Chemical mapping of a 177-nucleotide RNA with DMS. For DMS the reverse transcriptase was MarathonRT. The reactions ran in a buffer of 150 mM KOAc, 10 mM MgCl2 and 150 mM bicine (pH 8.5), at 24 C. For DMS, 1,167 sequencing reads were counted.
[RMDB]
RNA sequence: GGGAACGACUCGAGUAGAGUCGAAAAGAUAUGGAGCCUGCAACAGCUCCACGUGUCGGAAACGACAUGGAGACAUGCAGUCUCCUAAGUCAAAAGGUUAACACGGACUUCGGUCCGUGUUAACCAAGAAAAACCAUGUGUUCGCACAUGGUUUUUCAAAAGAAACAACAACAACAAC
Reactivity to DMS in 0.01 (KOAc 150mM, MgCl2 10mM, bicine 150mM(pH8.5), 24C), signal-to-noise 1, nucleotides 027 to 126: g010a030u010a240u010g000g010a020g000c140c000u030g070c010a000a040c270a190g000c000u000c010c030a010c100g040u000g040u010c000g000g000a090a030a200c000g040a000c000a000u000g000g000a020g030a160c030a170u000g010c030a020g000u000c010u000c000c000u020a000a050g000u010c000a050a100a100a110g000g020u000u000a000a010c000a030c000g000g000a010c010u000u020c170g030g000u010c000c000g000u000g000u000u000a020a020c030c000a010a040